[RMDB]
RNA sequence: GGGAACGACUCGAGUAGAGUCGAAAAGUAGAAUAGUUCAGAAUUUCGAGGAAGAUAUUCUUCGUUCAACCUCAGACCUAGUCAGGCGAGCAGAGAGGUCCCAUCGAAGCUUAUGGGCCUGCAGCUCUCUCGGAGCUGUUUUCGAACAGCUCCGAGAAAAAGAAACAACAACAACAAC
Reactivity to 2A3 in 0.01 (KOAc 150mM, MgCl2 10mM, bicine 150mM(pH8.5), 24C), signal-to-noise 2, nucleotides 027 to 126: g110u100a000g060a080a040u080a090g020u040u120c080a030g160a150a140u030u120u160c110g050a050g120g110a020a050g020a140u050a080u200u050c030u000u070c000g000u090u110c040a100a070c000c000u050c070a030g010a030c000c000u020a030g070u130c020a010g000g060c000g010a010g000c010a000g000a000g000a010g030g010u080c000c010c000a030u050c020g020a000a000g050c030u030u040a060u030g240g000g000c000c030u030g040c000a000g000c000u000c000
Reactivity to DMS in 0.01 (KOAc 150mM, MgCl2 10mM, bicine 150mM(pH8.5), 24C), signal-to-noise 2, nucleotides 027 to 126: g000u030a040g030a060a040u010a090g000u000u020c090a020g000a060a210u040u000u020c090g000a040g030g010a060a130g000a110u000a080u000u000c040u000u000c000g040u000u010c050a070a110c100c000u000c110a050g010a110c160c010u010a010g000u040c010a000g000g070c060g000a010g000c000a040g000a300g000a000g000g010u010c020c050c030a260u000c080g000a190a080g020c030u020u000a100u010g000g000g000c060c000u010g020c040a120g030c100u000c120